[RMDB]
RNA sequence: GGGAACGACUCGAGUAGAGUCGAAAAAGAAUUGUACCACCACUGCGUAUCCUAAACGGGCUCUGCAGUGGUUAUUCUUGUAAAGUACUAGGAGUGAAUAGUGGCGCGUAUUGCAGGCAUUAACAUUAAAAGGCAAUCCACUUCGGUGGAUUGCCAACUCAUAAUAGAUGUUCGCAUCUAUUAUGAGAAAAGAAACAACAACAACAAC
Reactivity to DMS in 0.01 (KOAc 150mM, MgCl2 10mM, bicine 150mM(pH8.5), 24C), signal-to-noise 3, nucleotides 027 to 156: a060g000a040a050u000u000g010u010a080c060c090a110c020c010a010c010u000g040c000g040u000a100u000c010c000u000a050a140a160c200g030g010g010c050u000c060u010g040c000a030g010u000g000g010u000u000a010u000u000c030u010u000g020u000a090a100a110g000u000a040c020u000a080g030g010a080g000u000g010a080a090u000a060g030u010g040g020c050g030c060g020u000a060u000u010g000c000a080g000g000c050a100u010u000a060a120c080a120u010u000a030a100a100a120g010g010c000a010a010u000c010c000a010c000u000u000c300g040g020u000g010g000a000u000u000g000c010c000a000a020
Reactivity to 2A3 in 0.01 (KOAc 150mM, MgCl2 10mM, bicine 150mM(pH8.5), 24C), signal-to-noise 4, nucleotides 027 to 156: a010g060a010a040u120u110g020u090a070c040c000a000c010c000a000c040u010g000c000g030u070a080u140c000c010u090a190a160a140c130g030g000g000c060u040c080u160g000c010a000g000u000g000g000u000u000a000u000u000c000u010u030g060u080a070a100a130g040u000a050c060u090a040g050g040a030g020u110g050a050a070u070a120g060u060g030g000c020g010c030g050u080a090u040u150g030c050a020g040g000c020a040u090u140a090a020c030a050u070u200a100a110a030a020g000g000c000a000a000u000c000c000a000c000u010u060c160g030g000u000g000g000a000u000u000g000c000c000a020a010